Structure probing data (DMS and 2A3) for a 177-nucleotide construct. For 2A3 the reverse transcriptase was SuperScript II with manganese. The reactions ran in a buffer of 150 mM KOAc, 10 mM MgCl2 and 150 mM bicine (pH 8.5), at 24 C. The 2A3 profile rests on 756 reads.

RNA sequence: GGGAACGACUCGAGUAGAGUCGAAAAGGACAGCAAAAAUACGAUAGGCGCUACCAAUCGGUAGUGCCAACCAGUUCUAAGAUCGUAGGUCACUGCUGUGUAGAGAUUCUGCCAGUCACUUUGCGUGUCUUUGUCAAACCUUCGGGUUUGACAAAGAAAAAGAAACAACAACAACAAC
Reactivity to DMS in 0.01 (KOAc 150mM, MgCl2 10mM, bicine 150mM(pH8.5), 24C), signal-to-noise 2, nucleotides 027 to 126: g010g010a010c020a030g040c010a000a040a020a180a060u000a020c010g030a000u010a150g030g010c010g030c000u010a020c010c010a200a170u010c230g010g000u000a000g010u000g000c010c000a040a000c160c150a120g000u000u000c090u010a120a070g040a090u000c000g020u000a000g040g030u010c190a110c120u000g010c000u000g010u000g000u000a050g000a280g000a130u000u000c000u000g000c010c030a020g000u000c050a100c080u000u000u000g000c080g000u000g010
Reactivity to 2A3 in 0.01 (KOAc 150mM, MgCl2 10mM, bicine 150mM(pH8.5), 24C), signal-to-noise 1, nucleotides 027 to 126: g040g050a020c010a010g010c000a010a040a000a000a110u080a020c010g040a010u030a100g000g000c010g020c000u000a000c000c000a010a300u300c190g020g050u010a000g000u010g010c000c000a020a000c010c000a000g000u070u100c040u170a080a000g060a120u040c010g000u040a000g020g120u140c070a050c080u080g000c010u000g000u010g090u030a000g040a010g000a070u020u030c030u000g040c000c000a010g040u040c000a020c080u040u050u220g070c070g040u020g030